[RMDB]
RNA sequence: GGGAACGACUCGAGUAGAGUCGAAAAGAUAUGGAAAUUAGGGAGCUACCGAGUAGAGCAACAGCGAGAGCUCGGAAACGAGCUCUCGACAUGCUCGAAACUAGCGAAGAACUAAUUUCCUAAGUCACAUGCUUAGAAAGUUCGCUUUCUAAGCAUGAAAAGAAACAACAACAACAAC
Reactivity to DMS in 0.01 (KOAc 150mM, MgCl2 10mM, bicine 150mM(pH8.5), 24C), signal-to-noise 4, nucleotides 027 to 126: g000a040u010a300u020g000g000a010a010a010u000u000a010g010g010g000a080g000c000u020a010c300c040g040a090g000u000a130g000a020g010c010a050a090c300a200g000c020g000a020g010a010g010c000u010c000g000g000a050a070a130c020g020a000g010c000u000c000u000c010g000a020c100a120u000g000c010u010c000g020a110a120a130c090u000a010g010c020g010a120a130g000a070a190c010u000a010a000u000u000u000c000c000u010a020a080g010u000c030a300
Reactivity to 2A3 in 0.01 (KOAc 150mM, MgCl2 10mM, bicine 150mM(pH8.5), 24C), signal-to-noise 2, nucleotides 027 to 126: g040a050u090a080u190g010g010a000a030a030u000u000a010g000g010g030a040g050c010u000a030c220c120g030a020g060u020a000g010a000g020c020a030a240c040a130g130c010g000a000g030a000g020c000u000c020g020g000a070a060a010c010g020a000g000c000u000c000u000c010g000a000c000a000u080g000c000u020c020g000a010a000a020c000u010a000g020c030g300a300a010g010a040a000c000u000a000a000u010u010u000c000c000u010a150a000g020u010c010a020